[RMDB]
Structure probing data (2A3 and DMS) for a 207-nucleotide construct. DMS adducts were read by reverse transcription with MarathonRT. 2A3 adducts were read by reverse transcription with SuperScript II with manganese. The RNA was probed in 150 mM KOAc, 10 mM MgCl2 and 150 mM bicine (pH 8.5) at 24 C. The 2A3 profile rests on 5,325 reads. The data come from the RNA Mapping Database (RMDB), library ARCHII.
RNA sequence: GGGAACGACUCGAGUAGAGUCGAAAAUGCCACGUCUGUUCGAAGAGUAGUCUUCGUGGCAACUGGCAGUUAAACCGUGUAGUACCGAUGGAGGUUGGAAACAAUGCACAUCACUACCGGGUCUUGGGCAGUGCGAUAGCGAUGGGAUUCACCUUCGGAUAUUAAAUCUGUUCGCAGAUUUAAUAUCAAAAGAAACAACAACAACAAC
Reactivity to 2A3 in 0.01 (KOAc 150mM, MgCl2 10mM, bicine 150mM(pH8.5), 24C), signal-to-noise 5, nucleotides 027 to 156: u040g000c010c000a040c120g040u040c130u120g040u060u040c030g030a040a020g030a050g080u240a090g080u040c030u010u010c010g040u070g030g010c000a010a020c010u010g020g000c010a010g010u050u170a080a070a020c010c010g010u050g000u100a040g010u010a060c080c110g020a030u020g010g040a070g020g050u010u010g020g020a060a050a010c020a010a050u120g060c070a030c000a060u030c000a000c020u010a020c010c000g040g000g010u010c040u060u060g020g010g000c010a020g010u030g060c030g060a080u070a060g010c020g040a050u050g010g030g010a060u070u070c050a110c040c000u040u070c030g030
Reactivity to DMS in 0.01 (KOAc 150mM, MgCl2 10mM, bicine 150mM(pH8.5), 24C), signal-to-noise 3, nucleotides 027 to 156: u000g010c010c010a020c140g030u000c060u000g010u000u020c000g000a030a040g010a080g020u010a150g000u000c010u000u010c000g020u000g030g030c010a030a050c030u010g010g020c020a060g010u000u000a060a090a090c030c020g000u000g020u000a060g020u000a090c080c030g010a100u010g030g010a090g030g030u000u000g000g000a230a090a120c050a060a060u000g020c060a110c010a040u000c020a170c000u000a050c010c030g000g000g010u000c040u010u000g020g010g040c020a060g020u000g010c000g020a080u010a060g020c030g000a080u000g000g010g000a170u000u000c020a070c050c000u000u010c050g030